[RMDB]
RNA sequence: GGGAACGACUCGAGUAGAGUCGAAAAUUUGGUUAAGUACUUCCCCCUUGCGAGCAACAGGUGUCGUCCUGUUUGUUAGCCCUGCGCGGUUUCGUCCGUGUAGUGAUGGAGGGUGUGCCUGACCCACGAUUGGUCAUAUCUUCGGAUAUGACCAAUCAAAAGAAACAACAACAACAAC
Reactivity to DMS in 0.01 (KOAc 150mM, MgCl2 10mM, bicine 150mM(pH8.5), 24C), signal-to-noise 1, nucleotides 027 to 126: u000u000u010g010g000u010u000a030a050g000u020a000c020u010u000c000c010c020c020c000u000u010g030c010g000a140g020c000a010a010c010a020g010g020u000g040u030c230g000u010c010c010u000g080u000u000u000g000u010u000a280g010c030c090c000u000g000c010g000c000g000g000u010u010u030c110g000u000c000c000g020u000g000u000a010g010u000g010a130u010g010g010a030g030g010g010u000g000u020g000c030c020u000g010a020c000c000c300a110c170
Reactivity to 2A3 in 0.01 (KOAc 150mM, MgCl2 10mM, bicine 150mM(pH8.5), 24C), signal-to-noise 2, nucleotides 027 to 126: u030u010u080g000g000u000u000a000a050g010u010a000c000u290u290c000c000c000c000c000u020u050g040c010g010a040g000c000a000a010c010a020g000g050u110g090u230c050g040u100c010c000u020g020u080u010u040g010u000u030a000g000c000c000c000u020g000c020g000c020g000g080u050u300u170c080g090u000c000c010g010u000g030u000a000g000u010g040a070u110g020g010a120g010g000g020u010g000u010g000c000c010u010g010a010c000c000c010a050c040

An RNA of 177 nucleotides, treated with DMS and 2A3 and read out base by base.
The reactions ran in a buffer of 150 mM KOAc, 10 mM MgCl2 and 150 mM bicine (pH 8.5), at 24 C.
The data come from the RNA Mapping Database (RMDB), library RFMREP.